[RMDB]
The record gives the reactivity of an RNA of 177 nucleotides to 2A3 and DMS.
Reactivities are rounded to 0.1 and cut off at 0 and 3.
It was measured as part of the RMDB library OK2TRN.
RNA sequence: GGGAACGACUCGAGUAGAGUCGAAAACGUUGAGUCGCGUGCUCUAGACCCGAAGCGGGGUGAUCUAUCCAUGGGCAGGUUGAAGCGUGGGUAAGACUGCGUGGAGGACCGAACCCACUUAGGUUAACCUCACAUAGUUCUUCGGAACUAUGUGAGGAAAAGAAACAACAACAACAAC
Reactivity to 2A3 in 0.01 (KOAc 150mM, MgCl2 10mM, bicine 150mM(pH8.5), 24C), signal-to-noise 1, nucleotides 027 to 126: c060g050u040u110g010a010g000u000c020g020c070g180u210g050c010u000c030u030a040g030a090c000c000c050g050a050a000g120c070g020g010g000g020u040g020a030u020c030u030a030u010c040c090a080u070g000g000g010c000a010g030g020u010u060g030a020a000g000c000g010u030g070g000g000u030a070a000g080a100c000u020g010c030g000u020g000g010a070g100g180a030c030c010g020a040a100c020c000c000a010c050u030u050a030g040g030u050u110a040a060
Reactivity to DMS in 0.01 (KOAc 150mM, MgCl2 10mM, bicine 150mM(pH8.5), 24C), signal-to-noise 3, nucleotides 027 to 126: c110g020u020u010g020a040g020u000c020g030c160g000u010g000c010u000c020u000a080g000a210c050c010c030g000a040a100g010c130g010g000g000g010u000g000a040u010c000u010a030u010c000c230a090u000g020g000g010c030a300g010g010u000u000g000a260a200g000c010g030u000g010g010g000u010a080a140g000a250c000u000g020c030g010u000g010g000a260g000g010a010c010c000g000a050a300c020c010c020a020c090u000u000a020g000g010u000u000a060a200
For DMS, 1,996 sequencing reads were counted. The RNA was probed in 150 mM KOAc, 10 mM MgCl2 and 150 mM bicine (pH 8.5) at 24 C. The 2A3 profile rests on 1,840 reads. 2A3 is a SHAPE reagent: it acylates the 2'-hydroxyl of flexible nucleotides of all four kinds. For 2A3 the reverse transcriptase was SuperScript II with manganese. Reactivities are given for positions 27 through 126.